An RNA of 177 nucleotides, treated with 2A3 and DMS and read out base by base. The data come from the RNA Mapping Database (RMDB), library OK2TRN. The reactions ran in a buffer of 150 mM KOAc, 10 mM MgCl2 and 150 mM bicine (pH 8.5), at 24 C. Reactivities are given for positions 27 through 126.
[RMDB]
RNA sequence: GGGAACGACUCGAGUAGAGUCGAAAACUUACGUCUGCAUCGCUGAUCAGAUCGUGCUCCGCCCGAUCUUCGCAAGAAGAGGCAUUACGGGCUGGACCUGCCCUCUUGUGGGCGCCAGAUCCAGGGCCUGGUAAUCAAGUUUCGACUUGAUUACCAGAAAAGAAACAACAACAACAAC
Reactivity to 2A3 in 0.01 (KOAc 150mM, MgCl2 10mM, bicine 150mM(pH8.5), 24C), signal-to-noise 5, nucleotides 027 to 126: c020u070u050a020c040g020u000c010u030g020c070a040u040c040g100c300u190g030a040u040c020a010g020a060u140c050g030u050g010c030u050c040c050g010c010c020c000g080a070u000c010u010u020c010g000c050a050a030g000a000a010g010a040g050g030c040a020u070u170a050c060g010g020g000c020u050g030g000a030c010c070u050g000c000c020c000u070c090u110u220g080u200g050g010g010c000g020c010c000a020g000a080u040c010c010a030g010g020g000c000
Reactivity to DMS in 0.01 (KOAc 150mM, MgCl2 10mM, bicine 150mM(pH8.5), 24C), signal-to-noise 7, nucleotides 027 to 126: c070u000u010a050c080g000u000c010u010g010c160a030u010c040g020c180u000g010a050u000c030a030g000a030u000c060g020u000g010c100u000c040c100g010c020c010c010g010a140u000c000u000u010c020g000c290a090a140g000a020a030g000a050g020g020c120a180u010u010a160c110g010g000g010c010u000g010g010a040c060c040u010g000c040c000c000u000c280u000u010g000u010g010g010g010c060g020c080c020a030g000a040u000c010c030a120g000g010g010c070
The 2A3 profile rests on 8,946 reads.